[RMDB]
RNA sequence: GGGAACGACUCGAGUAGAGUCGAAAAGGAGGACAAAGCAUAUUUCUGUUUCUGGAGGAUUAUUUAUAAUCUGCCGGAAAGUCUUGCAGGUGGCUGGGAUAUGUUCAGUCUGGUAGAAUUAAGCACGAAAACGUGUCCUUGUUCGCAAGGACACGAACUCUAACGUUGAGUUCGCUCAACGUUAGAGAAAAGAAACAACAACAACAAC
Reactivity to DMS in 0.01 (KOAc 150mM, MgCl2 10mM, bicine 150mM(pH8.5), 24C), signal-to-noise 2, nucleotides 027 to 156: g000g020a130g030g040a130c040a080a060a130g010c070a050u000a090u000u000u000c020u010g000u000u000u000c020u000g000g000a060g010g000a040u000u000a040u000u020u000a030u000a060a020u000c040u000g030c010c000g020g000a010a030a060g000u010c030u000u000g020c010a130g020g010u000g030g010c060u000g010g020g030a090u000a040u000g030u000u000c040a220g030u000c050u010g000g040u010a080g050a090a090u010u000a080a080g020c030a090c070g030a070a080a080a130c010g020u000g000u000c000c010u000u010g020u000u000c300g050c010a000a000g000g020a030c000a000c000g010a010a040
Reactivity to 2A3 in 0.01 (KOAc 150mM, MgCl2 10mM, bicine 150mM(pH8.5), 24C), signal-to-noise 3, nucleotides 027 to 156: g040g010a010g000g010a020c040a030a100a010g020c020a040u040a110u050u110u060c070u080g100u030u030u010c010u020g010g010a020g000g000a000u000u030a010u020u260u030a090u050a030a010u010c030u060g070c010c000g020g050a040a000a000g010u010c050u050u110g050c040a020g020g080u040g020g000c000u030g010g030g010a020u030a000u090g030u070u040c030a010g030u020c040u040g000g060u070a070g070a070a040u110u120a090a060g020c030a020c090g040a030a070a070a050c030g010u000g000u000c010c000u010u020g020u050u010c120g000c100a010a000g000g000a010c000a000c000g000a000a000

This 207-nucleotide RNA was probed chemically with DMS and 2A3. 2A3 is a SHAPE reagent: it acylates the 2'-hydroxyl of flexible nucleotides of all four kinds. 2A3 adducts were read by reverse transcription with SuperScript II with manganese. The reactions ran in a buffer of 150 mM KOAc, 10 mM MgCl2 and 150 mM bicine (pH 8.5), at 24 C. DMS (dimethyl sulfate) methylates the pairing face of unpaired adenines and cytosines.